This 177-nucleotide RNA was probed chemically with DMS and 2A3.
The reactions ran in a buffer of 150 mM KOAc, 10 mM MgCl2 and 150 mM bicine (pH 8.5), at 24 C.
2A3 adducts were read by reverse transcription with SuperScript II with manganese.
RNA sequence: GGGAACGACUCGAGUAGAGUCGAAAAGAUGGGGUGACGCAGGAAGGUAGCUGAGCCAGUCAGUGGUAAUACUGGUGUAAGCGUGUAGGGCGUGACCUAGGCAAAUCCGGGUCACAUUCAGCCUGAGUAUCCCAACCUUUUUCGAAAGGUUGGGAUAAAAAGAAACAACAACAACAAC
Reactivity to DMS in 0.01 (KOAc 150mM, MgCl2 10mM, bicine 150mM(pH8.5), 24C), signal-to-noise 7, nucleotides 027 to 126: g000a070u020g000g010g020g020u010g010a040c120g010c030a060g010g020a120a070g010g000u010a120g000c010u000g010a300g010c020c020a030g010u010c150a150g030u010g030g010u020a120a120u020a050c020u000g000g000u010g020u040a150a090g010c020g000u010g020u010a130g000g000g020c080g010u000g000a020c000c000u000a070g030g000c270a060a090a180u030c010c040g010g000g010u000c000a020c020a090u010u010c180a140g000c010c010u010g010a110g000
Reactivity to 2A3 in 0.01 (KOAc 150mM, MgCl2 10mM, bicine 150mM(pH8.5), 24C), signal-to-noise 5, nucleotides 027 to 126: g060a010u080g000g000g010g030u030g030a020c010g000c030a020g060g030a070a030g070g010u060a060g010c020u020g020a010g050c040c000a000g010u060c040a060g050u100g220g020u130a140a030u080a200c000u000g030g000u030g040u130a030a030g010c020g030u040g050u060a010g000g030g010c030g010u020g000a010c000c000u050a170g020g000c080a090a060a020u100c010c000g000g010g000u000c000a000c000a020u150u130c020a010g020c000c020u010g000a010g050